Structure probing data (DMS and 2A3) for a 207-nucleotide construct. It was measured as part of the RMDB library RNAMAK. The reactions ran in a buffer of 150 mM KOAc, 10 mM MgCl2 and 150 mM bicine (pH 8.5), at 24 C.

RNA sequence: GGGAACGACUCGAGUAGAGUCGAAAAAUAGUCGUGUUCGCACGACUAUAAAAAAGAUAUGGACGCAUCACCGUGGGAGAAAUUUCGGAAACGAAAUCUCGACGAUCACGGUGAGUGCGUCCUAAGUCAAAAAAUAUCCUCUUUCGAGAGGAUAUAAGGUAUAUUAGCUUUUCGAAGCUAAUAUACCAAAAGAAACAACAACAACAAC
Reactivity to DMS in 0.01 (KOAc 150mM, MgCl2 10mM, bicine 150mM(pH8.5), 24C), signal-to-noise 2, nucleotides 027 to 156: a030u000a010g040u000c010g090u000g000u000u010c300g050c010a020c000g000a020c000u010a010u000a000a030a090a110a070a130g000a100u000a300u020g000g000a040c000g030c010a050u000c000a000c000c010g050u000g010g000g000a110g010a030a010a020u010u000u020c020g040g010a210a110a220c000g020a010a010a000u000c010u000c000g000a080c080g000a040u000c000a010c010g010g040u000g000a010g010u000g050c020g010u000c000c000u010a020a080g010u000c040a000a010a130a090a140a090u010a020u000c000c000u000c000u000u000u010c230g000a040g010a030g010g000a000u000a000u000a040a080
Reactivity to 2A3 in 0.01 (KOAc 150mM, MgCl2 10mM, bicine 150mM(pH8.5), 24C), signal-to-noise 4, nucleotides 027 to 156: a000u050a000g000u000c010g010u010g060u040u110c260g030c090a000c000g010a010c000u000a010u040a000a020a000a000a000a000g040a020u070a030u140g000g000a000c000g000c000a000u020c000a000c000c000g010u010g000g020g000a010g020a000a030a010u010u000u000c020g020g030a040a060a060c010g000a010a010a010u030c010u020c010g210a230c000g000a010u040c000a000c000g000g000u010g000a000g000u010g000c000g000u000c000c000u000a000a000g000u000c020a000a020a000a100a010a020u110a000u110c000c000u010c000u060u060u220c300g120a030g000a000g000g000a000u000a000u000a000a000